[RMDB]
RNA sequence: GGGAACGACUCGAGUAGAGUCGAAAAGAAAGGCAGCCAUUGCAGCCCACGCAGCCAUUCGAUGCAUGCUUUUGCAUGCCGCCCACGACUGAGGGCAGCUGCGGCACUGAGGGCAGCUGCCGAAAGAAUAUGCCAUUACCUUCGGGUAAUGGCAUAUAAAAGAAACAACAACAACAAC
Reactivity to 2A3 in 0.01 (KOAc 150mM, MgCl2 10mM, bicine 150mM(pH8.5), 24C), signal-to-noise 2, nucleotides 027 to 126: g080a040a040a030g020g000c000a010g030c010c030a090u070u290g080c120a030g010c000c000c000a000c010g000c000a000g050c010c010a090u100u170c100g070a060u210g010c000a000u010g000c020u090u190u230u300g000c010a030u000g000c000c010g000c000c010c000a100c030g180a050c130u200g040a170g020g030g000c000a000g000c000u010g000c080g010g000c040a020c150u130g050a120g000g010g000c000a000g000c020u020g010c000c000g000a000a000a000g030a000
Reactivity to DMS in 0.01 (KOAc 150mM, MgCl2 10mM, bicine 150mM(pH8.5), 24C), signal-to-noise 3, nucleotides 027 to 126: g000a100a090a160g020g030c000a020g000c010c080a210u000u030g020c120a100g010c050c040c040a160c040g000c010a010g010c020c100a110u000u000c170g010a140u000g000c010a000u000g000c000u000u000u010u010g020c000a010u000g000c000c140g000c000c000c000a110c130g000a140c170u040g010a130g000g000g030c000a140g000c000u000g000c000g020g000c230a070c150u010g000a060g010g020g030c060a190g000c000u000g010c000c000g010a030a070a120g030a190
An RNA of 177 nucleotides, treated with 2A3 and DMS and read out base by base. For 2A3, 1,569 sequencing reads were counted. For 2A3 the reverse transcriptase was SuperScript II with manganese. In probing experiments dimethyl sulfate is read out at A N1 and C N3, which are open when not base-paired. Reactivities are given for positions 27 through 126.